[RMDB]
RNA sequence: GGGAACGACUCGAGUAGAGUCGAAAAAGACCGCAGGACUUGCGGUGCGGUAUUGUGGAGACAUACCGCAAGGUUUCCAUCAAGCCUGAUGGUUACAAGGCGGCUUCUUGCAAAGAUUCAGCCGUCACAGGAGAAGACACUUCGGUGUCUUCUCCUGAAAAGAAACAACAACAACAAC
Reactivity to 2A3 in 0.01 (KOAc 150mM, MgCl2 10mM, bicine 150mM(pH8.5), 24C), signal-to-noise 4, nucleotides 027 to 126: a000g040a030c000c000g000c040a020g040g150a190c070u110u030g000c010g010g010u000g000c000g000g000u010a060u030u300g030u040g100g180a150g000a010c020a030u000a000c010c000g000c000a010a020g110g000u000u050u000c000c000a000u050c010a030a120g150c000c030u050g000a040u000g020g040u010u000a060c050a040a050g010g010c000g000g010c010u040u000c030u040u220g250c140a230a110a000g040a030u070u200c080a000g000c000c000g010u020c020a020
Reactivity to DMS in 0.01 (KOAc 150mM, MgCl2 10mM, bicine 150mM(pH8.5), 24C), signal-to-noise 2, nucleotides 027 to 126: a140g020a090c000c000g020c000a050g040g000a220c130u010u000g000c140g020g010u020g010c000g000g020u010a010u030u040g040u000g020g030a210g000a040c100a020u000a010c000c010g000c000a040a100g000g030u010u000u010c000c000a020u020c050a030a090g040c120c080u000g000a020u020g000g000u000u000a010c010a170a130g060g010c000g000g000c020u000u000c050u000u030g020c220a110a100a080g000a030u070u030c240a080g000c000c000g000u000c030a120